[RMDB]
RNA sequence: GGGAACGACUCGAGUAGAGUCGAAAAUCACGCAAAUCCUGACCUAUCACGUAGUGGCCGGGAAGUACGAUAUGAAACAACUGGAAAGUAAAAUCAAGGCCGGAGGCGGGACUGCCGAGCUGAAAACGAUUUUUAUAAACUUCGGUUUAUAAAAAUCAAAAGAAACAACAACAACAAC
Reactivity to DMS in 0.01 (KOAc 150mM, MgCl2 10mM, bicine 150mM(pH8.5), 24C), signal-to-noise 2, nucleotides 027 to 126: u010c080a150c100g010c100a000a090a180u010c010c010u000g090a060c020c030u000a090u000c030a090c210g010u000a140g010u000g020g040c030c010g010g030g010a050a050g010u000a040c090g010a120u000a080u010g000a110a120a090c120a100a080c030u000g030g010a080a090a120g030u000a020a040a090a040u000c010a110a170g020g010c040c070g020g010a030g020g000c020g000g020g000a040c070u000g000c000c040g000a060g000c070u010g000a050a040a120a150c150
Reactivity to 2A3 in 0.01 (KOAc 150mM, MgCl2 10mM, bicine 150mM(pH8.5), 24C), signal-to-noise 1, nucleotides 027 to 126: u060c000a010c040g030c030a060a030a020u060c000c000u010g170a230c040c000u150a120u150c000a030c250g220u210a140g100u070g050g000c000c040g010g040g010a010a000g000u080a020c060g020a050u000a030u300g020a110a140a020c010a050a070c060u120g000g170a230a060a020g090u140a030a120a070a020u110c010a040a120g030g000c040c000g020g000a050g010g000c060g030g060g040a080c010u010g060c000c010g020a050g000c040u050g010a060a090a000a000c010
The record gives the reactivity of an RNA of 177 nucleotides to DMS and 2A3. Reactivities are given for positions 27 through 126. The reactions ran in a buffer of 150 mM KOAc, 10 mM MgCl2 and 150 mM bicine (pH 8.5), at 24 C. For DMS, 856 sequencing reads were counted.